[RMDB]
Chemical mapping of a 170-nucleotide RNA with DMS and 2A3.
The DMS profile rests on 30,327 reads.
2A3 adducts were read by reverse transcription with SuperScript II with manganese.
Conditions: 150 mM KOAc, 10 mM MgCl2 and 150 mM bicine (pH 8.5), 24 C.
RNA sequence: GGGAACGACUCGAGUAGAGUCGAAAAUAUCAGUUAGAUUCACUGCUAACAAAAUUGUUGGUGGUGCUCCUACAUGGUUUAAUGCGUUGCGUGACUUUACGUUAAAGGGUUAUGUUCUUGCUACCAUACACUACACCGUUCGCGGUGUAGAAAAGAAACAACAACAACAAC
Reactivity to DMS in 0.01 (KOAc 150mM, MgCl2 10mM, bicine 150mM(pH8.5), 24C), signal-to-noise 7, nucleotides 027 to 129: u050a070u010c070a110g030u000u000a000g040a000u000u000c030a040c010u030g040c000u000a010a020c010a080a090a180a120u050u040g030u030u030g010g030u000g030g000u030g000c300u000c010c000u020a060c130a090u030g030g020u010u000u000a080a070u010g030c080g060u000u000g030c100g000u030g020a040c030u010u020u030a050c080g040u030u040a080a090a140g050g000g000u030u020a070u000g000u010u050c030u000u000g030c040u060a050c000c000a060u010a060c180a090
Reactivity to 2A3 in 0.01 (KOAc 150mM, MgCl2 10mM, bicine 150mM(pH8.5), 24C), signal-to-noise 9, nucleotides 027 to 129: u130a010u020c010a020g110u080u150a040g000a030u090u070c010a000c010u010g000c010u010a000a000c000a050a110a170a170u270u150g000u000u000g010g000u010g000g010u010g020c030u020c000c000u020a060c020a110u050g020g070u060u080u190a090a040u160g050c060g150u130u110g030c010g010u040g010a000c000u010u020u060a040c050g160u080u180a120a070a060g090g000g000u040u010a040u120g010u040u000c010u040u070g020c000u030a070c000c020a040u030a100c080a000